[RMDB]
Source: RMDB library M2PK50, as collected in RNAgym. This 177-nucleotide RNA was probed chemically with DMS and 2A3. Reactivities are given for positions 27 through 126.
RNA sequence: GGGAACGACUCGAGUAGAGUCGAAAACAUUAGCCGUUCGCGGCUAAUGCCGACUGUCUUGUUUGAUGGUAGAGUGGAAGGACAGGUAGUCCUUUUUAGAAAUCGCCCAUUCAUUCGUGAAUGGGAAUCGUGUGAAAAAUUUCGAUUUUUCACACGAAAAAGAAACAACAACAACAAC
Reactivity to DMS in 0.01 (KOAc 150mM, MgCl2 10mM, bicine 150mM(pH8.5), 24C), signal-to-noise 5, nucleotides 027 to 126: c020a010u000u000a000g010c000c010g030u000u010c230g030c010g010g000c000u000a000a000u000g010c050c040g000a070c040u000g010u000c040u000u000g010u000u000u000g010a040u000g000g020u000a090g000a150g020u010g010g010a040a020g000g000a010c020a170g020g000u010a160g010u000c000c000u000u000u000u010u010a090g010a080a090a080u010c150g020c010c000c000a000u000u000c000a060u000u010c170g020u000g000a000a000u000g000g000g000a010a010
Reactivity to 2A3 in 0.01 (KOAc 150mM, MgCl2 10mM, bicine 150mM(pH8.5), 24C), signal-to-noise 3, nucleotides 027 to 126: c000a000u000u010a010g000c010c010g030u040u040c290g010c020g060g000c010u000a000a000u010g040c020c000g070a040c010u010g060u050c010u080u260g210u300u240u170g080a010u020g000g050u050a070g060a060g190u140g030g070a020a000g020g000a010c020a030g110g190u130a060g000u020c010c000u050u040u000u040u070a110g060a020a080a010u150c100g040c020c030c000a000u000u000c010a000u000u080c200g050u020g000a000a000u000g000g040g020a000a000